[RMDB]
An RNA of 207 nucleotides, treated with 2A3 and DMS and read out base by base. In probing experiments dimethyl sulfate is read out at A N1 and C N3, which are open when not base-paired. DMS adducts were read by reverse transcription with MarathonRT. For 2A3, 1,237 sequencing reads were counted. The data come from the RNA Mapping Database (RMDB), library PSEUDOB. The RNA was probed in 150 mM KOAc, 10 mM MgCl2 and 150 mM bicine (pH 8.5) at 24 C.
RNA sequence: GGGAACGACUCGAGUAGAGUCGAAAAUUAAGGAGGAUCAAAGGACUGAGAUGCAGAAGGGCCAUAUCAUUUGAAUAUGCUAUGUCGUACGUCAUAAGACAUCAAAGUCAAGUCGACUCGUAGACACUCUGUGUCCCACAAUUCAUUUGUGGCCUCCGUUUUUGACUACGUUCGCGUAGUCAAAAACAAAAGAAACAACAACAACAAC
Reactivity to 2A3 in 0.01 (KOAc 150mM, MgCl2 10mM, bicine 150mM(pH8.5), 24C), signal-to-noise 3, nucleotides 027 to 156: u200u100a050a020g000g000a020g000g010a020u070c010a050a020a000g020g000a010c040u010g010a010g000a060u020g000c010a000g000a100a080g040g020g020c060c000a000u010a000u010c020a070u040u180u300g080a130a030u040a010u020g000c050u030a040u090g010u040c040g130u120a040c030g030u010c020a050u030a200a090g010a030c000a020u180c030a060a200a000g030u020c030a030a050g070u050c030g010a030c020u000c030g000u000a000g010a040c000a030c020u060c000u070g000u050g020u010c030c020c000a030c010a000a020u130u120c080a150u050u030u050g030u010g090g030c000c010u000c000c000
Reactivity to DMS in 0.01 (KOAc 150mM, MgCl2 10mM, bicine 150mM(pH8.5), 24C), signal-to-noise 1, nucleotides 027 to 156: u010u000a200a050g010g000a000g030g000a160u000c030a030a020a020g080g010a030c090u000g020a300g020a030u010g060c000a160g030a080a100g040g040g000c060c000a070u000a040u000c020a080u000u000u000g000a100a090u000a000u000g040c130u020a090u010g010u030c060g030u000a070c020g040u000c090a120u000a080a170g030a080c020a030u030c050a100a090a120g000u020c030a050a160g010u010c050g000a100c030u000c140g000u000a150g000a060c010a030c020u000c020u010g070u010g000u000c040c000c020a020c030a030a030u000u000c100a220u010u000u010g030u000g020g010c020c010u000c030c020